[RMDB]
RNA sequence: GGGAACGACUCGAGUAGAGUCGAAAACCGAGUGAGUUCGCUCACUCGGAAAGAAGUGUGCGCAUACUGCUGCGACAGUAGCGACAAGAGCAGCAAGCAUAAAAACAAACCUGUUCGCAGGUUUGAACGGGUAGCUUAAGUUCGCUUAAGCUACCCGAAAAGAAACAACAACAACAAC
Reactivity to DMS in 0.01 (KOAc 150mM, MgCl2 10mM, bicine 150mM(pH8.5), 24C), signal-to-noise 1, nucleotides 027 to 126: c020c010g000a040g050u000g000a020g030u000u020c260g030c000u000c000a000c020u000c000g000g000a060a060a040g000a110a100g020u020g030u000g010c030g010c030a140u000a120c010u020g000c020u000g010c080g010a200c280a050g000u000a020g000c090g000a040c070a060a070g000a110g010c000a020g010c000a040a070g000c020a100u020a080a020a110a080a080c000a030a000a000c020c000u000g000u000u030c280g000c000a000g020g010u000u000u000g010a020a090
Reactivity to 2A3 in 0.01 (KOAc 150mM, MgCl2 10mM, bicine 150mM(pH8.5), 24C), signal-to-noise 1, nucleotides 027 to 126: c000c010g000a000g000u010g030a000g000u020u150c180g030c090u000c000a000c020u000c010g000g020a020a010a000g050a030a010g080u030g000u030g140c020g000c060a100u050a080c000u050g000c040u100g070c020g020a010c020a050g040u050a010g070c040g040a030c040a040a000g060a010g140c010a000g010c030a030a040g050c020a040u150a090a210a060a000a010c000a000a030a000c010c000u030g010u050u050c240g010c030a000g000g000u000u010u010g000a030a010